The record gives the reactivity of an RNA of 177 nucleotides to DMS and 2A3. The reactions ran in a buffer of 150 mM KOAc, 10 mM MgCl2 and 150 mM bicine (pH 8.5), at 24 C. For 2A3, 7,640 sequencing reads were counted.
RNA sequence: GGGAACGACUCGAGUAGAGUCGAAAAGAAAUCAGUUGGCGAUCGAACGACGGGGCAUACAAGGUCCUCUACACAAUGACCGUAGCGCGAGCUACCAGUAAGAAGUAGAGGAAGCCGAUGUUCCGUCCUCUAUCUUGAUGUUCGCAUCAAGAUAGAGAAAAGAAACAACAACAACAAC
Reactivity to DMS in 0.01 (KOAc 150mM, MgCl2 10mM, bicine 150mM(pH8.5), 24C), signal-to-noise 4, nucleotides 027 to 126: g000a120a100a070u020c070a100g010u000u020g020g010c120g010a060u000c080g020a090a060c210g010a020c000g020g010g000g000c010a000u000a050c150a060a140g010g010u000c010c000u000c010u010a000c010a040c070a110a200u000g000a060c280c270g010u000a000g010c000g010c300g010a220g010c000u000a000c010c010a030g000u010a050a000g000a100a110g000u010a000g010a010g000g010a020a030g010c040c090g010a000u000g000u000u000c000c000g010u000c010
Reactivity to 2A3 in 0.01 (KOAc 150mM, MgCl2 10mM, bicine 150mM(pH8.5), 24C), signal-to-noise 3, nucleotides 027 to 126: g040a010a110a010u150c080a040g050u040u050g110g040c100g040a070u030c040g040a100a090c050g010a010c000g000g010g010g000c010a000u030a070c070a160a060g000g020u030c010c000u000c000u020a000c080a000c010a010a070u020g000a010c010c000g000u000a000g000c020g020c040g020a020g000c000u010a000c000c000a000g000u010a000a010g030a130a020g010u010a000g000a010g000g000a000a000g020c010c000g010a000u000g010u010u010c000c000g000u000c000